[RMDB]
The record gives the reactivity of an RNA of 177 nucleotides to 2A3 and DMS.
The RNA was probed in 150 mM KOAc, 10 mM MgCl2 and 150 mM bicine (pH 8.5) at 24 C.
For 2A3 the reverse transcriptase was SuperScript II with manganese.
For 2A3, 3,006 sequencing reads were counted.
RNA sequence: GGGAACGACUCGAGUAGAGUCGAAAACCUCGUUGGUCCUAGCCGGUGCACAGCUUUCGUGUGACCUGCGCGAGCCGGUGUCUGCUUUCGGCGGUGGUCAAUGCCGCCAUCUUCGAGGUUAGGGAUAGGGAAAAUGAGUAUUCGUACUCAUUUUCCCAAAAGAAACAACAACAACAAC
Reactivity to 2A3 in 0.01 (KOAc 150mM, MgCl2 10mM, bicine 150mM(pH8.5), 24C), signal-to-noise 3, nucleotides 027 to 126: c000c000u000c000g000u010u030g090g060u070c000c030u030a030g020c000c050g070g020u150g040c030a000c000a150g010c020u040u120u110c050g010u020g060u100g180a300c040c070u070g010c000g010c010g010a000g020c030c030g080g000u020g030u030c030u060g080c010u050u080u220c070g010g000c000g010g000u030g030g040u190c130a040a090u210g010c020c000g000c010c000a010u000c000u020u010c000g020a020g030g000u000u010a090g110g000g040a090u120a160
Reactivity to DMS in 0.01 (KOAc 150mM, MgCl2 10mM, bicine 150mM(pH8.5), 24C), signal-to-noise 4, nucleotides 027 to 126: c010c000u000c040g020u000u010g010g010u000c090c070u000a090g010c020c070g010g000u000g010c030a040c020a210g000c060u000u010u000c060g030u010g010u010g010a090c200c060u010g000c010g000c040g000a050g000c010c050g020g010u010g010u000c050u010g010c030u000u000u010c120g040g010c010g000g020u010g020g000u010c300a110a110u010g000c010c010g020c010c000a020u030c000u000u000c010g010a020g010g010u000u000a080g000g010g010a120u000a160